[RMDB]
Description:
Structure probing data (2A3 and DMS) for a 177-nucleotide construct. 2A3 adducts were read by reverse transcription with SuperScript II with manganese. The reactions ran in a buffer of 150 mM KOAc, 10 mM MgCl2 and 150 mM bicine (pH 8.5), at 24 C. Reactivities are given for positions 27 through 126. The 2A3 profile rests on 624 reads. For DMS the reverse transcriptase was MarathonRT.
RNA sequence: GGGAACGACUCGAGUAGAGUCGAAAAGGAAGUCCAUAGCUCCGCGGGAGCGUGGCAAGCCUCACCGAUGCGUUAUCGUAAUCAAGGAUUGUCCAUGUCAUCAGAUGAACACGCGGACGAGUAUUCGAAGGAACUUGGGAUUCGUCCCAAGUUCCUUAAAAGAAACAACAACAACAAC
Reactivity to 2A3 in 0.01 (KOAc 150mM, MgCl2 10mM, bicine 150mM(pH8.5), 24C), signal-to-noise 2, nucleotides 027 to 126: g080g030a020a040g030u000c010c000a010u110a060g070c070u000c000c000g100c010g050g130g030a150g030c000g010u000g000g000c060a000a000g070c000c000u000c030a030c030c210g000a020u000g000c000g150u190u050a260u220c080g010u060a090a000u050c030a000a000g060g000a050u020u040g000u030c040c000a000u000g010u050c020a070u000c030a050g120a300u120g010a050a030c130a000c040g000c010g000g000a000c040g000a000g040u070a260u000u130c010g000
Reactivity to DMS in 0.01 (KOAc 150mM, MgCl2 10mM, bicine 150mM(pH8.5), 24C), signal-to-noise 1, nucleotides 027 to 126: g000g040a150a040g040u020c000c030a050u000a050g000c070u000c000c000g000c070g020g010g030a050g000c000g060u000g000g050c040a000a020g000c000c010u010c170a130c190c160g000a000u000g020c030g000u060u020a190u040c010g000u000a030a010u050c020a080a000g000g000a070u000u000g000u040c020c000a020u000g000u020c000a110u060c110a070g000a080u080g070a070a070c080a110c030g000c000g020g000a000c080g000a050g010u000a060u080u000c000g000
The DMS profile rests on 1,969 reads.